The record gives the reactivity of an RNA of 207 nucleotides to DMS and 2A3.
The reactions ran in a buffer of 150 mM KOAc, 10 mM MgCl2 and 150 mM bicine (pH 8.5), at 24 C.
For DMS the reverse transcriptase was MarathonRT.
The 2A3 profile rests on 2,331 reads.
[RMDB]
RNA sequence: GGGAACGACUCGAGUAGAGUCGAAAAGGCUGUUGAAAUACAUUCCUGUGCCGGCAAUACAGUGUGUAUGGAGGUCUCAAUGGCUCGGAAGUGCCAGCAAUCCGGCGUAGAUAUUAGCAGACGUAUGAUAGGAUGCAUCCGUUCGCGGAUGCAUCAACAAAUACAAGCUCUUCGGAGCUUGUAUUUGAAAAGAAACAACAACAACAAC
Reactivity to DMS in 0.01 (KOAc 150mM, MgCl2 10mM, bicine 150mM(pH8.5), 24C), signal-to-noise 3, nucleotides 027 to 156: g000g030c010u000g020u000u000g010a120a110a110u000a040c020a070u000u000c300c020u000g030u000g020c010c010g030g010c050a080a100u000a040c020a080g000u010g000u010g010u010a060u000g010g010a090g020g030u000c040u000c050a060a100u010g020g010c000u010c030g030g010a090a230g000u000g020c000c000a060g000c090a070a120u000c010c000g010g010c010g010u010a070g020a160u000a080u000u000a080g010c040a070g000a070c060g000u000a060u000g010a160u000a120g010g010a030u000g010c000a010u000c010c000g020u000u010c300g030c040g020g010a010u000g000c010a000u000c010a010a060
Reactivity to 2A3 in 0.01 (KOAc 150mM, MgCl2 10mM, bicine 150mM(pH8.5), 24C), signal-to-noise 4, nucleotides 027 to 156: g040g010c020u020g010u300u020g060a050a030a000u060a030c020a020u060u100c010c020u030g020u030g040c010c020g040g030c040a010a070u130a170c040a040g000u000g010u000g010u080a020u030g030g030a040g010g040u030c030u000c070a070a150u040g000g000c030u030c070g050g060a140a030g030u030g060c000c010a030g040c060a030a040u030c010c010g000g000c000g030u040a040g090a110u120a090u210u140a050g050c030a030g030a090c050g100u130a060u170g130a070u080a070g190g000a000u000g000c000a000u000c010c000g010u030u040c210g010c000g100g000a000u010g000c000a000u000c000a000a000